RNA sequence: GGGAACGACUCGAGUAGAGUCGAAAAUCGCGUCGGGCGCGCAGGUGGCCAAUGUAAAGGCGGGAAGUCCCGCGCAGAAGGGCGGGAUCUUGGAGAACGAUGUGAUCGUCAAGGUCGGUAACCGCGCCGUAAAUUCACUGUUCGCAGUGAAUUUACGAAAAGAAACAACAACAACAAC
Reactivity to 2A3 in 0.01 (KOAc 150mM, MgCl2 10mM, bicine 150mM(pH8.5), 24C), signal-to-noise 3, nucleotides 027 to 126: u060c010g010c010g080u030c040g020g040g000c040g000c010g000c070a070g060g050u050g090g020c010c010a030a030u110g030u260a190a060a090g040g000c010g000g000g010a040a020g050u060c000c000c000g000c010g030c010a060g070a230a090g050g030g000c000g030g000g000a020u010c010u010u050g030g030a110g030a130a020c040g010a030u090g080u190g230a100u040c000g020u040c050a020a000g000g030u020c040g010g010u020a030a030c000c000g000c020g040c010
Reactivity to DMS in 0.01 (KOAc 150mM, MgCl2 10mM, bicine 150mM(pH8.5), 24C), signal-to-noise 4, nucleotides 027 to 126: u000c060g010c040g020u000c040g000g000g020c060g020c060g020c110a100g020g010u000g010g010c020c030a090a100u000g010u010a070a090a110g010g020c030g020g000g010a150a090g010u000c010c000c010g020c040g030c060a100g010a130a130g010g010g010c030g000g000g000a010u000c010u010u010g000g000a100g020a120a080c040g010a070u000g030u010g000a120u010c030g000u010c040a040a050g010g010u010c010g010g020u010a080a150c050c000g010c030g010c040